[RMDB]
Structure probing data (2A3) for a 177-nucleotide construct.
RNA sequence: GGGAACGACUCGAGUAGAGUCGAAAAGAUAUGGAUCUAGCAGCUAUGAAGUGUACGGUUUGUCGGAAACGAUAAUUUGUACAUGGAGCUGUCUAGAUCCUAAGUCAAAGACAAGUUCGCUUGUCAAGAGCAUUGCUCUGUUCGCAGAGCAAUGCUCAAAAGAAACAACAACAACAAC
Reactivity to 2A3 in 0.01 (KOAc 150mM, MgCl2 10mM, bicine 150mM(pH8.5), 24C), signal-to-noise 1, nucleotides 027 to 126: g010a000u090a080u120g010g010a010u010c000u000a010g000c010a000g000c000u130a260u300g040a050a000g050u000g000u020a000c070g140g000u040u140u180g040u030c000g010g020a080a020a020c020g000a000u000a020a110u050u110u300g020u000a010c010a000u030g000g020a000g040c000u000g030u000c000u000a000g010a000u000c000c000u000a010a010g010u000c040a100a000a000g020a020c000a020a000g000u030u290c300g160c120u020u000g020u030c070a050a050
It was measured as part of the RMDB library TTRDEL. Values are in units of 0.01, from 0 to 300, in steps of 10. For 2A3 the reverse transcriptase was SuperScript II with manganese.